[RMDB]
RNA sequence: GGGAACGACUCGAGUAGAGUCGAAAAAGGGUGAUGUUCACGAACUUGGGUGUGUCACCUGUAUAGUACAUCAGGGUUUCAUCUUCGGGAGGGACUCGGGAUCCGGGCUCGCACAGGGCCUCUGGGCGCCAGUAUCGAGGUUCGCCUCGAUACUGGCAAAAGAAACAACAACAACAAC
Reactivity to 2A3 in 0.01 (KOAc 150mM, MgCl2 10mM, bicine 150mM(pH8.5), 24C), signal-to-noise 1, nucleotides 027 to 126: a000g110g020g020u050g020a060u110g010u190u100c060a080c060g170a160a080c220u150u140g130g090g000u010g010u110g070u040c000a010c020c030u010g010u040a090u060a040g010u090a050c030a130u030c040a120g000g020g040u050u070u110c070a130u000c120u140u200c040g040g020g130a180g010g050g000a030c000u040c020g020g020g000a020u000c000c000g030g000g030c020u020c000g010c020a100c040a120g040g010g000c000c070u040c000u070g020g000g050c040
Reactivity to DMS in 0.01 (KOAc 150mM, MgCl2 10mM, bicine 150mM(pH8.5), 24C), signal-to-noise 1, nucleotides 027 to 126: a210g000g010g020u010g020a000u010g000u010u010c070a060c040g000a080a140c300u000u020g010g000g030u000g020u000g010u000c020a010c000c010u000g040u020a070u000a070g020u000a120c110a030u000c040a110g070g020g000u000u000u000c080a060u000c100u010u000c140g020g000g030a200g020g010g000a100c140u010c090g010g010g000a250u000c060c030g010g000g040c010u030c000g030c300a050c220a150g030g000g020c040c010u000c030u010g040g010g000c300
The record gives the reactivity of an RNA of 177 nucleotides to 2A3 and DMS. Conditions: 150 mM KOAc, 10 mM MgCl2 and 150 mM bicine (pH 8.5), 24 C. 2A3 adducts were read by reverse transcription with SuperScript II with manganese. It was measured as part of the RMDB library OK2TST. For 2A3, 618 sequencing reads were counted. DMS adducts were read by reverse transcription with MarathonRT.